[RMDB]
RNA sequence: GGGAACGACUCGAGUAGAGUCGAAAAGAAAGAAAAGAAACUACCGAUGAAGACCGGUAUUCUACGCCUGUACCACGGGUCGGUUUUCCUACAGGCGAAGCACGAUGAAAGACAUCGUGCAAAGAAAGGACUAUGCUACUUUCGAGUAGCAUAGUCCAAAAGAAACAACAACAACAAC
Reactivity to DMS in 0.01 (KOAc 150mM, MgCl2 10mM, bicine 150mM(pH8.5), 24C), signal-to-noise 2, nucleotides 027 to 126: g060a100a040a050g000a100a130a080a080g010a070a040a100c120u000a010c000c000g020a120u020g010a150a170g010a140c140c000g000g010u020a000u010u000c000u000a090c030g000c000c000u000g060u010a140c040c090a120c120g000g010g030u000c020g000g020u010u040u010u010c010c030u000a030c090a080g040g000c030g000a040a060g010c000a000c020g010a000u000g020a160a100a100g000a290c030a000u000c000g010u010g000c010a050a010a090g010a030a130a060
Reactivity to 2A3 in 0.01 (KOAc 150mM, MgCl2 10mM, bicine 150mM(pH8.5), 24C), signal-to-noise 3, nucleotides 027 to 126: g070a010a070a000g100a020a130a040a010g050a020a070a020c070u040a010c000c020g030a050u150g060a060a000g050a080c040c000g000g010u000a040u050u020c070u030a010c010g000c000c000u030g010u040a040c000c020a060c110g070g010g040u030c070g000g010u080u000u040u090c000c010u030a000c010a010g000g050c020g020a040a020g000c000a000c000g010a010u010g070a200a070a060g180a060c000a010u000c000g000u010g020c030a000a000a000g020a010a030a020